An RNA of 177 nucleotides, treated with DMS and 2A3 and read out base by base. The data come from the RNA Mapping Database (RMDB), library M2PK50. High 2A3 reactivity points to a flexible backbone, as in loops and unpaired stretches. For 2A3 the reverse transcriptase was SuperScript II with manganese. Conditions: 150 mM KOAc, 10 mM MgCl2 and 150 mM bicine (pH 8.5), 24 C.
RNA sequence: GGGAACGACUCGAGUAGAGUCGAAAACUCCAUUGCUUCGGCAAUGGAGAAACAGGACGUGAGACCGAAACGGAGGUAGGUCCAACUUCCUUCUCACAAAAAAAACGCUUAGGUUCGCCUAAGCGAACGGACAACUUAUGUUCGCAUAAGUUGUCCGAAAAGAAACAACAACAACAAC
Reactivity to DMS in 0.01 (KOAc 150mM, MgCl2 10mM, bicine 150mM(pH8.5), 24C), signal-to-noise 2, nucleotides 027 to 126: c000u000c000c000a000u000u020g000c010u000u000c240g030g010c000a000a020u000g040g000a010g000a010a050a060c200a040g010g030a000c240g010u000g000a190g010a030c050c010g000a090a180a300c140g000g020a020g000g030u000a110g020g010u010c040c070a100a020c020u000u000c000c000u000u000c010u000c020a040c040a030a000a010a030a070a120a100a180c010g020c010u000u000a020g000g030u000u000c200g020c000c010u010a000a000g000c000g000a020a050
Reactivity to 2A3 in 0.01 (KOAc 150mM, MgCl2 10mM, bicine 150mM(pH8.5), 24C), signal-to-noise 2, nucleotides 027 to 126: c000u000c000c000a000u010u010g000c000u030u050c180g130g000c010a000a010u000g000g000a010g000a010a010a010c040a010g010g000a000c010g010u010g020a090g000a040c000c030g060a160a150a040c160g210g060a080g130g020u030a010g000g040u000c000c000a050a050c000u010u000c000c000u030u030c010u000c000a070c010a000a040a060a010a020a000a040a060c030g020c000u010u000a010g040g050u060u020c220g080c060c000u000a000a000g000c010g000a010a000